This 177-nucleotide RNA was probed chemically with DMS and 2A3. It was measured as part of the RMDB library OK1LIB. The reactions ran in a buffer of 150 mM KOAc, 10 mM MgCl2 and 150 mM bicine (pH 8.5), at 24 C. For 2A3 the reverse transcriptase was SuperScript II with manganese.
RNA sequence: GGGAACGACUCGAGUAGAGUCGAAAAGUAGAAGAUAGAUCUAUAUAACAGAAUAUAUGUUAUUUUGUUUUCUAAAAACAAUUAUCGUGAUUGUCUAAUCUAUUCUUAUUGUUUAUUUUAGUAGAAAGUUACAUUGUCAUUUCGAUGACAAUGUAACAAAAGAAACAACAACAACAAC
Reactivity to DMS in 0.01 (KOAc 150mM, MgCl2 10mM, bicine 150mM(pH8.5), 24C), signal-to-noise 1, nucleotides 027 to 126: g000u010a060g000a090a070g000a070u000a000g000a010u010c040u010a040u010a130u000a040a020c000a050g000a080a040u000a000u020a080u010g000u000u000a050u000u000u020u010g000u000u000u000u000c120u020a070a070a200a140a050c000a010a000u020u000a090u020c110g000u140g010a000u000u000g000u000c050u010a060a110u020c000u000a000u050u000c020u000u050a090u040u020g000u030u000u020a030u030u070u010u010a090g010u020a080g000a100a050a040
Reactivity to 2A3 in 0.01 (KOAc 150mM, MgCl2 10mM, bicine 150mM(pH8.5), 24C), signal-to-noise 2, nucleotides 027 to 126: g070u060a010g030a050a020g010a020u020a050g040a010u060c010u000a100u070a000u040a270a000c010a010g070a200a030u100a080u050a140u180g040u060u010a070u020u050u040u000g000u000u000u070u000c070u100a160a100a000a030a000c030a010a030u090u030a080u250c150g010u090g040a040u030u050g010u000c040u030a100a020u000c000u000a010u110u000c030u080u010a030u100u040g030u010u100u010a060u020u220u010u020a050g030u010a030g120a030a060a000